Chemical mapping of a 177-nucleotide RNA with 2A3 and DMS. The data come from the RNA Mapping Database (RMDB), library OK2TST. The reactions ran in a buffer of 150 mM KOAc, 10 mM MgCl2 and 150 mM bicine (pH 8.5), at 24 C. For 2A3 the reverse transcriptase was SuperScript II with manganese. The 2A3 profile rests on 29,856 reads.

RNA sequence: GGGAACGACUCGAGUAGAGUCGAAAACGAGAGUAUGUAGCUCAGGCCGGUUAUGGCUGCACUAACUGUCGGGCUCUCCUCCUCGCCGUGCUUAGCCUGGAGGUAUGCCGCACUCGCCAUGGAUAUGACGUUAACAUCUAUUCGUAGAUGUUAACGUAAAAGAAACAACAACAACAAC
Reactivity to 2A3 in 0.01 (KOAc 150mM, MgCl2 10mM, bicine 150mM(pH8.5), 24C), signal-to-noise 9, nucleotides 027 to 126: c040g010a010g000a000g070u080a050u170g050u060a030g010c020u040c160a040g080g030c030c040g070g030u170u180a130u220g040g000c020u030g010c020a020c040u090a180a020c020u050g080u150c030g040g020g000c010u020c010u000c020c000u000c000c000u010c020g000c010c020g160u200g050c060u140u190a020g000c000c010u010g020g000a010g010g010u030a030u100g010c000c010g020c010a040c020u030c020g040c030c020a070u110g080g020a080u100a090u300g080
Reactivity to DMS in 0.01 (KOAc 150mM, MgCl2 10mM, bicine 150mM(pH8.5), 24C), signal-to-noise 9, nucleotides 027 to 126: c060g000a060g000a060g020u000a070u010g020u010a060g010c030u010c130a140g010g010c030c020g010g010u010u010a080u010g010g010c020u000g010c080a060c140u010a090a070c050u000g000u000c040g010g010g000c020u000c300u000c020c020u000c020c010u000c170g010c020c060g010u010g020c180u010u010a120g010c010c020u000g010g000a050g010g000u000a040u000g020c010c020g010c080a090c040u000c040g010c050c030a070u000g010g010a120u010a080u010g000